[RMDB]
RNA sequence: GGGAACGACUCGAGUAGAGUCGAAAAGAUAUGGAGUGGAACUACGCUGAACUGCUCGUUGAAAUCGGAAACGAUGGAGAGCAGGGAAGCGCCACUCCUAAGUCAAAUCACCGCUUCGGCGGUGAAAUCGUAAGAACUAGUUCGCUAGUUCUUACGAAAAAGAAACAACAACAACAAC
Reactivity to DMS in 0.01 (KOAc 150mM, MgCl2 10mM, bicine 150mM(pH8.5), 24C), signal-to-noise 7, nucleotides 027 to 126: g010a040u000a300u020g010g000a010g010u000g000g000a110a070c090u010a300c040g010c000u000g000a300a300c000u000g000c000u000c010g010u010u010g000a080a120a030u010c010g000g000a090a080a190c010g000a010u000g000g000a090g000a020g010c000a010g000g000g010a220a070g000c010g000c000c000a010c010u000c000c010u010a000a070g000u000c030a060a120a190u000c000a000c010c000g010c000u000u010c210g030g010c010g000g020u000g000a000a030a060
Reactivity to 2A3 in 0.01 (KOAc 150mM, MgCl2 10mM, bicine 150mM(pH8.5), 24C), signal-to-noise 6, nucleotides 027 to 126: g030a000u080a040u160g020g010a010g010u020g000g030a100a080c150u180a050c300g000c010u010g010a040a010c000u000g000c000u000c010g120u250u060g020a050a060a010u010c010g020g020a040a030a040c010g000a000u010g010g060a030g000a000g010c000a000g000g000g010a000a010g000c000g000c000c000a000c000u000c000c000u000a020a000g000u000c010a010a060a090u040c000a000c010c000g010c000u050u080c300g150g000c010g010g000u000g000a020a000a020
Overview
Structure probing data (DMS and 2A3) for a 177-nucleotide construct. For 2A3 the reverse transcriptase was SuperScript II with manganese. In probing experiments dimethyl sulfate is read out at A N1 and C N3, which are open when not base-paired.